[RMDB]
RNA sequence: GGGAACGACUCGAGUAGAGUCGAAAAGUCACGAGGAGACUCGUGACAGCAUGCUUCGGCAUGCAAGGGUCGGCAUGGCAUCUCCACCUCCUCGCGGUCCGACCUGGGCAUCCGAAGGAGGACGCACGUCCACUCGGAUGUAAAAGGGAGAGCCAAAACUACGUGGCAUAUUCGUAUGCCACGUAGUAAAAGAAACAACAACAACAAC
Reactivity to 2A3 in 0.01 (KOAc 150mM, MgCl2 10mM, bicine 150mM(pH8.5), 24C), signal-to-noise 1, nucleotides 027 to 156: g000u010c000a000c000g000a000g030g030a040g030a050c000u000c000g000u020g010a000c000a000g000c000a000u000g000c000u110u050c180g100g010c020a010u010g010c030a000a040g000g010g000u000c000g010g000c040a040u140g010g000c010a120u000c020u000c000c000a010c000c000u040c000c040u140c010g050c090g010g000u010c010c010g010a000c000c000u010g020g090g030c010a000u000c000c020g060a140a040g050g030a110g000g020a010c010g050c150a160c210g000u000c010c000a000c000u000c000g000g000a000u020g010u020a010a010a000a000g010g000g000a000g000a000g010c000c000a020a010a000